[RMDB]
RNA sequence: GGGAACGACUCGAGUAGAGUCGAAAAUGGCCCCGUGGCCGAGUGGUUGGAGUUCCACACACUCUAAUUAGGGAGUCCGGGUUUGAGGGUUCGGAUCCCCAAUGCGGACCUGCUCCACUUACCAGUCAUUAACGUAUCUCUUCGGAGAUACGUUAAUAAAAGAAACAACAACAACAAC
Reactivity to DMS in 0.01 (KOAc 150mM, MgCl2 10mM, bicine 150mM(pH8.5), 24C), signal-to-noise 6, nucleotides 027 to 126: u000g010g000c040c000c130c210g020u010g000g010c010c040g010a030g030u000g010g020u010u010g010g010a050g010u000u000c020c040a060c060a100c250a110c180u010c130u000a090a110u000u000a110g010g000g000a050g010u000c010c010g000g010g010u000u000u010g010a110g010g010g000u000u000c050g010g010a150u000c010c000c000c020a040a040u000g010c050g010g000a030c100c010u000g000c020u010c000c000a020c020u000u000a080c020c020a130g010u010c120
Reactivity to 2A3 in 0.01 (KOAc 150mM, MgCl2 10mM, bicine 150mM(pH8.5), 24C), signal-to-noise 5, nucleotides 027 to 126: u040g040g000c000c000c020c100g140u300g000g000c060c050g010a010g010u010g010g060u100u100g010g050a050g000u050u030c050c000a030c010a010c000a020c040u090c030u100a150a160u120u140a080g040g000g010a050g100u000c010c010g010g050g020u010u040u100g150a150g000g100g000u040u050c010g010g040a040u060c000c010c000c030a040a050u080g040c020g020g000a020c010c010u030g050c010u030c000c000a010c000u020u020a020c010c010a040g110u120c030
The data come from the RNA Mapping Database (RMDB), library OK2TST. The record gives the reactivity of an RNA of 177 nucleotides to DMS and 2A3. The RNA was probed in 150 mM KOAc, 10 mM MgCl2 and 150 mM bicine (pH 8.5) at 24 C. High DMS reactivity at an A or C suggests that its Watson-Crick edge is free. For DMS the reverse transcriptase was MarathonRT. For 2A3, 8,274 sequencing reads were counted.